[RMDB]
An RNA of 177 nucleotides, treated with 2A3 and DMS and read out base by base. For DMS, 1,086 sequencing reads were counted. The data come from the RNA Mapping Database (RMDB), library M2PK90. The RNA was probed in 150 mM KOAc, 10 mM MgCl2 and 150 mM bicine (pH 8.5) at 24 C.
RNA sequence: GGGAACGACUCGAGUAGAGUCGAAAAUAAAAGAGUGCUCGAGCAUGCCAAGGUGAGAGCAGUCCUGAGCAUGCGAACAGGACAGAGUGCUCAAAGGAAACUACUCGAAUCCCGCGACUCAAAAAAAGUUUAAAAGAUCUUUCGAGAUCUUUUAAACAAAAGAAACAACAACAACAAC
Reactivity to 2A3 in 0.01 (KOAc 150mM, MgCl2 10mM, bicine 150mM(pH8.5), 24C), signal-to-noise 2, nucleotides 027 to 126: u090a010a040a030a050g010a010g000u020g000c020u000c030g010a020g000c010a010u000g000c000c000a060a050g040g000u060g060a210g030a070g130c040a020g110u070c000c000u010g000a030g030c000a000u040g000c030g050a110a040c070a070g070g160a010c050a060g000a000g020u010g000c000u000c000a080a010a000g040g010a040a060a010c000u000a010c000u000c010g000a020a060u010c030c020c000g000c060g020a080c090u060c140a050a040a020a050a030a020a040
Reactivity to DMS in 0.01 (KOAc 150mM, MgCl2 10mM, bicine 150mM(pH8.5), 24C), signal-to-noise 2, nucleotides 027 to 126: u000a050a080a130a090g000a030g000u000g020c000u000c010g010a150g010c010a020u000g010c000c040a120a060g000g020u020g000a140g010a060g010c100a150g010u020c020c000u010g000a300g010c020a020u000g010c000g030a080a080c150a090g060g020a100c170a130g000a040g010u000g030c000u000c000a020a020a160g030g000a070a050a020c010u000a010c000u000c030g000a010a140u010c100c050c030g030c060g000a160c020u010c030a030a000a090a100a050a110a110
For 2A3 the reverse transcriptase was SuperScript II with manganese.